[RMDB]
RNA sequence: GGGAACGACUCGAGUAGAGUCGAAAAAAUUGUAGUCUGGAGAGGCGUCCUCAGCGACGGACCGGGCCCAAGUUCCCUGGAAAGGGACGCCUGGGAGGGUGAGAGCCCCGUCCGGCCCGGACCCUGCAUUCAAUCUUUGUUUCGACAAAGAUUGAAUAAAAGAAACAACAACAACAAC
Reactivity to DMS in 0.01 (KOAc 150mM, MgCl2 10mM, bicine 150mM(pH8.5), 24C), signal-to-noise 7, nucleotides 027 to 126: a060a090u020u020g010u010a070g010u010c040u010g000g000a110g010a060g010g010c060g000u000c010c010u010c140a110g020c110g000a050c090g000g010a090c010c100g000g000g020c010c030c070a060a050g010u020u000c000c000c000u000g010g050a170a090a020g000g000g010a030c030g010c050c050u010g010g010g010a270g010g010g010u000g000a130g000a180g010c020c010c010c090g010u000c020c060g000g000c010c030c080g000g000a090c040c010c040u010g000c100
Reactivity to 2A3 in 0.01 (KOAc 150mM, MgCl2 10mM, bicine 150mM(pH8.5), 24C), signal-to-noise 3, nucleotides 027 to 126: a000a000u180u140g040u050a100g040u030c060u060g080g020a090g010a030g080g030c040g030u020c010c010u060c050a060g020c030g110a060c030g010g010a000c000c010g010g000g000c000c030c000a020a010g050u070u010c010c000c000u010g060g050a160a070a030g010g010g000a000c000g020c010c000u020g020g020g010a080g020g000g000u010g010a090g000a010g020c010c000c000c000g050u020c010c000g010g000c000c000c010g000g010a010c010c000c000u020g020c010
Conditions: 150 mM KOAc, 10 mM MgCl2 and 150 mM bicine (pH 8.5), 24 C. Structure probing data (DMS and 2A3) for a 177-nucleotide construct. 2A3 adducts were read by reverse transcription with SuperScript II with manganese. DMS adducts were read by reverse transcription with MarathonRT.